[RMDB]
RNA sequence: GGGAACGACUCGAGUAGAGUCGAAAAGAUAUGGAGUAAUUUCGCUGAUGACCUAUACAGCAGCAGCUUACCUAUAUCGGAAACGAUAUAGGUAAAGGUAUAGCAAGGCGAUGUUACUCCUAAGUCAGAUUAUAUGUCCGUUCGCGGACAUAUAAUCAAAAGAAACAACAACAACAAC
Reactivity to 2A3 in 0.01 (KOAc 150mM, MgCl2 10mM, bicine 150mM(pH8.5), 24C), signal-to-noise 1, nucleotides 027 to 126: g000a000u010a000u070g000g000a000g000u010a020a020u030u030u070c010g020c000u050g070a300u050g020a090c000c000u010a020u000a030c100a050g210c070a000g080c070a020g050c050u000u000a000c000c000u000a000u000a000u000c030g000g000a000a010a000c000g010a000u010a010u000a000g000g000u010a000a000a010g000g010u000a000u010a000g000c060a200a300g000g000c020g000a000u030g020u010u000a010c010u020c010c000u000a000a000g000u000c000a010
Reactivity to DMS in 0.01 (KOAc 150mM, MgCl2 10mM, bicine 150mM(pH8.5), 24C), signal-to-noise 2, nucleotides 027 to 126: g010a000u000a010u000g000g000a020g010u000a000a020u000u000u000c020g040c000u000g020a060u020g010a070c300c000u000a010u000a000c020a200g030c040a080g010c080a120g000c040u000u010a010c000c000u000a010u000a000u000c000g010g010a010a000a020c000g010a010u000a000u000a000g010g010u010a000a010a030g000g000u000a000u010a000g000c010a060a010g000g040c010g000a020u000g020u000u000a000c000u000c010c000u000a000a060g000u000c000a140